Conditions: 150 mM KOAc, 10 mM MgCl2 and 150 mM bicine (pH 8.5), 24 C.
The record gives the reactivity of an RNA of 177 nucleotides to 2A3 and DMS.
For DMS, 1,847 sequencing reads were counted.
DMS adducts were read by reverse transcription with MarathonRT.
The 2A3 profile rests on 2,894 reads.
[RMDB]
RNA sequence: GGGAACGACUCGAGUAGAGUCGAAAAGUGACAGACUCACUCUGUGAGACAGACUGACUGACAGUCAGAGACUGUCUGACAGACUCUCUGUCUCUCAGUCUGACUGAGACUGACUGUCACAGACUGACCAGCCAAGUAUGUUCGCAUACUUGGCUGGAAAAGAAACAACAACAACAAC
Reactivity to 2A3 in 0.01 (KOAc 150mM, MgCl2 10mM, bicine 150mM(pH8.5), 24C), signal-to-noise 2, nucleotides 027 to 126: g000u020g010a000c000a020g010a090c040u000c020a040c010u040c040u040g120u090g120a050g020a010c010a000g010a000c010u020g000a000c010u000g000a000c000a020g030u090c090a010g020a010g010a090c010u010g010u070c180u100g050a020c000a010g010a020c000u000c010u010c010u030g000u010c000u010c000u000c010a030g070u000c040u020g040a080c030u010g050a010g000a030c080u070g050a040c000u020g000u000c000a010c000a000g060a060c010u040g050a030
Reactivity to DMS in 0.01 (KOAc 150mM, MgCl2 10mM, bicine 150mM(pH8.5), 24C), signal-to-noise 2, nucleotides 027 to 126: g000u000g020a020c010a020g010a190c110u000c030a060c210u000c020u000g010u000g030a080g010a160c000a010g000a070c000u000g000a030c030u000g000a000c040a020g010u010c150a080g000a130g010a030c010u000g010u000c100u000g020a070c010a000g010a090c080u000c060u000c010u000g000u000c000u000c050u000c010a000g000u000c050u000g010a110c080u010g000a050g010a120c080u010g000a060c010u000g010u010c010a020c050a120g000a180c040u000g020a220